Source: RMDB library TTRINS, as collected in RNAgym. Chemical mapping of a 177-nucleotide RNA with DMS. The DMS profile rests on 1,155 reads. For DMS the reverse transcriptase was MarathonRT. The RNA was probed in 150 mM KOAc, 10 mM MgCl2 and 150 mM bicine (pH 8.5) at 24 C.
[RMDB]
RNA sequence: GGGAACGACUCGAGUAGAGUCGAAAAGAUAUGGAACUCACUCAUCUCGUUGGUAUGCCAACAGCCUGUCAGUCGGAAACGACUGCAGGACAUGGCGCACCAACGAGAUGAGUGAGUUCCUAAGUCAUCGUUGAGUUAAGUUCGCUUAACUCAACGAAAAAGAAACAACAACAACAAC
Reactivity to DMS in 0.01 (KOAc 150mM, MgCl2 10mM, bicine 150mM(pH8.5), 24C), signal-to-noise 1, nucleotides 027 to 126: g000a040u000a300u010g010g000a000a010c000u020c000a010c010u000c000a000u000c000u020c000g000u020u000g000g000u020a020u010g000c000c020a000a070c300a230g020c000c020u000g010u020c000a020g050u000c000g000g000a150a120a200c000g020a020c000u020g020c030a000g000g000a000c110a150u010g000g000c000g030c110a020c000c000a000a000c000g020a010g040a000u000g000a000g010u000g000a010g010u000u000c010c020u010a000a100g020u000c010a190